[RMDB]
RNA sequence: GGGAACGACUCGAGUAGAGUCGAAAAGAUAUGGACCCAGCUUUUGACGCUGGACUAUCGGAAACGAUAGUUUUAGCGAUAAGCUGGUCCUAAGUCAAAUCUAUCCGGAGUUCGCUCCGGAUAGAAACGUUAGUGCCAAGUUCGCUUGGCACUAACGAAAAGAAACAACAACAACAAC
Reactivity to 2A3 in 0.01 (KOAc 150mM, MgCl2 10mM, bicine 150mM(pH8.5), 24C), signal-to-noise 1, nucleotides 027 to 126: g060a040u090a030u110g000g000a030c030c180c070a010g020c040u080u070u040u190g180a100c070g000c000u000g000g040a010c000u010a010u030c020g010g040a050a070a060c020g000a000u000a000g000u000u000u060u300a000g000c020g030a050u020a020a010g000c010u000g000g000u000c000c000u030a060a020g040u010c030a080a040a130u070c000u000a000u010c010c000g030g010a020g020u080u160c240g020c110u000c010c000g010g000a000u000a000g010a010a010a000
Reactivity to DMS in 0.01 (KOAc 150mM, MgCl2 10mM, bicine 150mM(pH8.5), 24C), signal-to-noise 2, nucleotides 027 to 126: g000a030u010a300u010g020g000a000c080c100c030a000g010c000u000u000u000u000g000a150c080g020c000u000g010g000a000c000u000a000u000c000g020g000a100a080a180c000g010a020u000a010g000u000u000u000u000a000g030c000g010a280u000a000a020g010c000u000g020g020u000c010c000u010a030a160g000u000c030a090a080a140u000c000u000a000u000c000c000g000g000a030g010u000u020c240g000c000u020c000c000g020g020a010u000a000g000a010a030a050